[RMDB]
RNA sequence: GGGAACGACUCGAGUAGAGUCGAAAAAAGUGUCAUGUCAUCACACCUUGUCACGGACACCUCAUUGUCACGCCAUCACCUUCGAUGACAUGGCAAUGACGUGUUAGUAACAAGACGUGAUGACGUGUCUUCAAGUCAUUUUCGAAUGACUUGAAGAAAAAGAAACAACAACAACAAC
Reactivity to 2A3 in 0.01 (KOAc 150mM, MgCl2 10mM, bicine 150mM(pH8.5), 24C), signal-to-noise 9, nucleotides 027 to 126: a000a010g220u170g050u070c010a000u010g000u000c000a000u000c000a000c000a020c020c000u000u000g000u000c020a010c020g030g010a000c000a000c000c010u000c000a010u000u000g010u000c000a000c020g020c020c000a000u010c010a060c090c160u240u280c160g000a000u000g000a010c010a020u000g000g000c000a000a000u000g000a000c010g000u000g000u000u010a020g000u010a020a000c000a010a000g020a020c120g000u000g000a000u000g000a000c000g000u000g000
Reactivity to DMS in 0.01 (KOAc 150mM, MgCl2 10mM, bicine 150mM(pH8.5), 24C), signal-to-noise 7, nucleotides 027 to 126: a090a050g020u010g000u010c000a020u010g000u000c010a000u000c000a000c000a280c060c010u000u000g010u000c060a000c010g000g020a020c000a000c000c060u000c000a010u000u000g010u000c000a010c060g020c010c000a010u000c010a160c300c270u030u020c180g010a010u000g000a030c000a060u000g000g000c000a000a000u000g000a010c260g000u000g010u000u010a080g030u010a040a010c000a010a000g000a120c090g010u000g000a000u000g000a000c000g030u000g000